[RMDB]
This 177-nucleotide RNA was probed chemically with 2A3. It was measured as part of the RMDB library RFM100. Conditions: 150 mM KOAc, 10 mM MgCl2 and 150 mM bicine (pH 8.5), 24 C. Reactivities are rounded to 0.1 and cut off at 0 and 3. The 2A3 profile rests on 2,291 reads.
RNA sequence: GGGAACGACUCGAGUAGAGUCGAAAAAGACGACGGAGUACGCUCCGUCGUCAACGCAGGUGUCGGAGGGAUCGCCAGCCCUCAGGAUAGUGAGCUCCCGCAGAGGGAUAAGCUAUCUCCCUGCGAAUUAUGAAAGGCCAUUCGUGGCCUUUCAUAAAAAAGAAACAACAACAACAAC
Reactivity to 2A3 in 0.01 (KOAc 150mM, MgCl2 10mM, bicine 150mM(pH8.5), 24C), signal-to-noise 3, nucleotides 027 to 126: a000g000a000c000g010a000c010g030g020a000g000u070a050c220g060c090u000c020c000g000u000c000g000u020c000a000a000c000g030c000a010g000g030u120g060u270c120g100g010a000g050g000g000a050u210c120g020c110c020a040g010c010c000c010u010c000a000g010g000a000u000a000g060u150g080a040g070c030u010c000c050c000g010c080a150g070a110g170g000g000a000u010a020a000g000c000u000a000u000c020u000c000c000c000u010g000c000g000a020a050